The record gives the reactivity of an RNA of 177 nucleotides to DMS and 2A3.
RNA sequence: GGGAACGACUCGAGUAGAGUCGAAAACGUAGGGACCUGUGAGCCUCCUCGAUGGUGCUGCCACAAGUGCGUUGGUGGCGCAUACGUGGCCCAGACAAGCUGCACAGCACCACCUCCUGCUUAGACACCUAUCCUGCGAUUUCGAUCGCAGGAUAGGAAAAGAAACAACAACAACAAC
Reactivity to DMS in 0.01 (KOAc 150mM, MgCl2 10mM, bicine 150mM(pH8.5), 24C), signal-to-noise 2, nucleotides 027 to 126: c070g050u020a120g000g010g020a080c050c050u040g000u010g030a060g030c100c060u000c020c010u000c150g000a130u040g000g000u030g000c000u000g000c000c010a040c030a120a190g040u010g000c130g000u000u070g000g020u050g000g000c000g000c040a060u010a030c300g000u000g020g000c020c120c120a080g000a150c190a150a140g000c030u000g000c040a140c110a000g050c080a050c000c000a060c040c020u000c010c000u010g000c060u000u030a090g000a060c140a120
Reactivity to 2A3 in 0.01 (KOAc 150mM, MgCl2 10mM, bicine 150mM(pH8.5), 24C), signal-to-noise 5, nucleotides 027 to 126: c050g020u050a120g040g030g020a050c020c030u090g050u040g080a010g030c000c020u060c030c010u090c090g080a080u060g030g020u040g020c050u070g000c000c000a040c030a170a220g030u050g070c030g050u060u090g060g100u060g080g010c010g000c000a030u020a060c070g020u000g010g000c050c020c000a060g040a070c030a100a020g020c050u070g000c060a020c000a050g000c010a020c000c010a020c000c020u010c000c000u010g050c030u090u090a030g030a060c030a000
Annotation
The 2A3 profile rests on 4,626 reads. The data come from the RNA Mapping Database (RMDB), library OK1LIB. Conditions: 150 mM KOAc, 10 mM MgCl2 and 150 mM bicine (pH 8.5), 24 C. For 2A3 the reverse transcriptase was SuperScript II with manganese.